[RMDB]
RNA sequence: GGGAACGACUCGAGUAGAGUCGAAAAGUCCUGAGACUAUUCGUGGACAGUUUAAAGUUCAUCCAAUUCAUGAAUAUAUCGCAGGAACAGCUCCUAAGCCAAGUGAUGAAUAUUCUUGCUCUCCGAAUGGAUGGAUGUAUGAUAAGCACCAAGAAGGGGUCGGUAUUCAAUUCGUUGAAUACCGACCAAAAGAAACAACAACAACAAC
Reactivity to 2A3 in 0.01 (KOAc 150mM, MgCl2 10mM, bicine 150mM(pH8.5), 24C), signal-to-noise 1, nucleotides 027 to 156: g030u030c000c000u010g050a080g030a000c040u030a100u160u030c030g010u040g030g020a030c000a030g000u040u050u030a070a160a020g020u060u060c010a010u020c070c010a160a300u020u010c000a040u090g030a120a000u150a090u030a060u100c040g000c000a020g040g030a200a070c000a050g020c000u000c000c010u030a100a050g000c040c110a090a000g060u010g030a130u090g020a040a070u080a070u090u030c020u030u050g090c000u010c020u050c050c030g120a040a030u050g080g000a030u030g010g010a000u000g000u050a020u060g090a000u070a130a010g050c070a110c110c010a020a020g020a050a050g080g030